Annotation
Conditions: 150 mM KOAc, 10 mM MgCl2 and 150 mM bicine (pH 8.5), 24 C. The record gives the reactivity of an RNA of 207 nucleotides to 2A3.
RNA sequence: GGGAACGACUCGAGUAGAGUCGAAAAAGCGAUGAUAAGUCAUCGCAACGAUUGCCUGAUCGUAAAACAGGAGACGGCCGUGGCCGCGACCACGUAAAAAAGCGUAACGUGGUCUACGGACCACGAAAAAAGCGCGGAACGUUCGCGUUCCGCGCAAGAUCUACUAAAAGUUCGCUUUUAGUAGAUCAAAAGAAACAACAACAACAAC
Reactivity to 2A3 in 0.01 (KOAc 150mM, MgCl2 10mM, bicine 150mM(pH8.5), 24C), signal-to-noise 2, nucleotides 027 to 156: a010g000c010g000a010u010g010a010u050a290a050g170u080c010a000u000c000g020c000a000a030c010g010a020u030u020g000c010c010u020g010a010u010c030g090u140a000a010a030a020c010a020g050g040a010g070a080c170g110g010c120c000g010u010g000g000c030c000g000c000g000a010c000c000a000c010g020u030a000a030a030a040a020a010g070c000g040u040a050a010c000g000u000g000g000u010c010u010a060c070g030g010a090c000c000a000c000g040a010a000a000a000a000a000g030c040g010c020g030g030a000a000c020g050u120u120c160g010c000g130u000u000c000c000g000c000g000c030a000a010